RNA sequence: GGGAACGACUCGAGUAGAGUCGAAAAGAUAUGGAUCAUUCCGUGUGGAGGGUGGGUGGUCGGAAACGACCAUAGCCCUAUGAAGCACGGAGAUGAUCCUAAGUCAAAAGGAAUCUUCGGAUUCCAACUCUACACUUUUGUUCGCAAAAGUGUAGAGAAAAGAAACAACAACAACAAC
Reactivity to DMS in 0.01 (KOAc 150mM, MgCl2 10mM, bicine 150mM(pH8.5), 24C), signal-to-noise 3, nucleotides 027 to 126: g020a100u010a300u010g020g010a030u000c010a030u000u010c000c000g020u000g010u000g000g020a010g020g010g010u000g000g030g030u000g010g050u020c010g000g000a080a080a190c010g010a030c010c000a020u000a300g000c000c000c010u000a090u010g000a180a300g000c000a000c000g000g000a010g000a060u000g000a010u000c000c000u000a020a100g000u010c040a110a060a150a210g000g000a070a010u000c000u000u020c180g030g000a020u000u000c000c000a080a190
Reactivity to 2A3 in 0.01 (KOAc 150mM, MgCl2 10mM, bicine 150mM(pH8.5), 24C), signal-to-noise 3, nucleotides 027 to 126: g010a020u100a010u230g000g000a000u000c010a010u010u010c000c010g010u030g010u010g000g090a030g040g050g020u070g110g300g040u010g020g040u010c000g020g020a060a100a060c030g000a000c020c000a010u010a000g010c000c000c000u130a300u040g000a000a000g000c010a010c010g000g000a020g000a000u000g000a000u000c000c000u000a070a020g050u030c040a030a080a000a250g000g020a030a010u000c020u130u160c300g120g010a040u030u000c000c010a000a040